This 207-nucleotide RNA was probed chemically with DMS and 2A3. The 2A3 profile rests on 6,042 reads. DMS adducts were read by reverse transcription with MarathonRT. Conditions: 150 mM KOAc, 10 mM MgCl2 and 150 mM bicine (pH 8.5), 24 C. DMS (dimethyl sulfate) methylates the pairing face of unpaired adenines and cytosines. It was measured as part of the RMDB library RNAMAK.

RNA sequence: GGGAACGACUCGAGUAGAGUCGAAAAGCGUACUACACAGCGACGUGGGAGAGGGUCAUCUCUAGCGUGCUUUCUCCCAAAUAGGAGAAAGUCGGGUGACCUACCCACCUCCCACCAAGCUGUGUAUCGCAAACUUUGCAAGUUCGCUUGCAAAGAAGAUAUCAGUCUUCUUCGGAAGACUGAUAUCAAAAGAAACAACAACAACAAC
Reactivity to DMS in 0.01 (KOAc 150mM, MgCl2 10mM, bicine 150mM(pH8.5), 24C), signal-to-noise 2, nucleotides 027 to 156: g000c010g010u000a020c030u000a020c000a000c010a000g000c000g000a300c250g000u000g000g010g040a030g000a190g000g010g050u000c020a030u010c020u000c070u010a100g050c150g030u000g020c000u000u020u000c000u000c010c000c050a080a060a200u010a080g020g010a020g000a010a010a020g010u000c020g030g020g040u000g000a070c010c000u000a040c020c040c050a300c120c010u000c000c000c020a020c000c030a040a300g000c010u000g020u000g020u000a000u000c000g000c010a080a060a140c000u000u000u000g000c000a000a000g030u000u000c300g020c010u000u000g010c020a010a010a010g000a130a140
Reactivity to 2A3 in 0.01 (KOAc 150mM, MgCl2 10mM, bicine 150mM(pH8.5), 24C), signal-to-noise 4, nucleotides 027 to 156: g010c000g070u100a090c030u000a010c040a010c000a010g010c000g020a040c040g030u020g000g010g000a020g020a010g000g010g020u020c020a020u010c070u030c080u180a150g120c080g160u220g020c050u010u000u010c000u030c010c040c050a120a120a040u300a030g010g000a000g000a000a000a000g020u030c020g000g000g000u010g000a000c000c000u030a050c000c010c010a030c000c000u000c000c000c000a000c010c010a010a020g000c000u000g000u000g000u000a000u000c000g000c000a010a010a060c000u010u000u010g000c000a000a030g010u040u120c200g120c120u000u000g000c000a000a000a000g030a020a020